[RMDB]
RNA sequence: GGGAACGACUCGAGUAGAGUCGAAAAGAUAUGGAACUUUACGAUUCAGUCAUAAGGGAGCCUACGUCAAUCGGAAACGAUUGACUAGGCGUUGAUCUUAUGAGCUGAAUCGUAAAGUUCCUAAGUCGAAAUAGCUAUUGUUCGCAAUAGCUAUUUCAAAAGAAACAACAACAACAAC
Reactivity to DMS in 0.01 (KOAc 150mM, MgCl2 10mM, bicine 150mM(pH8.5), 24C), signal-to-noise 5, nucleotides 027 to 126: g000a090u000a300u010g000g000a010a010c000u000u000u000a010c000g000a010u000u000c000a010g010u000c000a010u000a000a010g000g010g000a020g020c000c000u000a010c300g000u000c000a010a000u000c000g010g000a160a120a260c010g000a010u000u000g000a010c000u000a010g000g010c000g010u000u010g000a030u010c000u000u000a000u000g000a100g000c010u000g000a000a010u000c000g010u000a000a000a010g000u000u000c000c000u000a010a080g010u000c100